[RMDB]
RNA sequence: GGGAACGACUCGAGUAGAGUCGAAAAAUACGCAUUCGUGCGUAUAUACAUACCUUUGUGACGUGGGACAUGCUGAGAUAGCUGGUCCCAUUGGGACCCGAAACAGCAACAGCCGUAACAUCGUCACUCUGGUCUCAAACACCAGUUCGCUGGUGAAGGAAUACUAGACUUUCGAGUCUAGUAUUCCAAAAGAAACAACAACAACAAC
Reactivity to 2A3 in 0.01 (KOAc 150mM, MgCl2 10mM, bicine 150mM(pH8.5), 24C), signal-to-noise 6, nucleotides 027 to 156: a000u020a000c000g000c010a000u010u080c280g080u080g000c000g010u010a010u010a000u000a020c080a040u200a030c000c000u000u000u000g000u010g000a000c010g000u020g010g010g040a070c060a180u050g000c000u010g010a080g040a300u140a100g090c090u050g020g000u000c000c000c020a120u030u070g000g010g000a000c000c020c040g050a110a070a040c040a010g020c010a010a070c030a150g050c030c020g030u040a020a040c050a300u250c040g010u000c010a010c000u000c000u010g030g010u000c010u020c090a170a210a050c010a010c020c000a010g050u120u110c200g050c110u010g020g000u020g030a070a050
Reactivity to DMS in 0.01 (KOAc 150mM, MgCl2 10mM, bicine 150mM(pH8.5), 24C), signal-to-noise 2, nucleotides 027 to 156: a050u000a000c000g030c030a140u000u030c280g030u010g000c020g050u000a040u000a100u000a070c100a180u000a060c010c000u000u000u000g020u000g020a060c040g030u010g020g030g040a110c000a300u000g020c000u000g000a110g020a240u000a180g010c010u020g010g010u000c000c000c000a130u000u000g030g050g000a020c010c000c050g010a190a230a220c020a050g020c010a040a110c050a040g000c000c050g000u000a070a140c050a060u000c020g040u020c000a030c020u000c000u000g000g000u000c080u000c060a140a080a090c030a090c010c010a080g030u000u010c220g050c010u000g040g030u000g030a090a160
Structure probing data (2A3 and DMS) for a 207-nucleotide construct.
Conditions: 150 mM KOAc, 10 mM MgCl2 and 150 mM bicine (pH 8.5), 24 C.
2A3 adducts were read by reverse transcription with SuperScript II with manganese.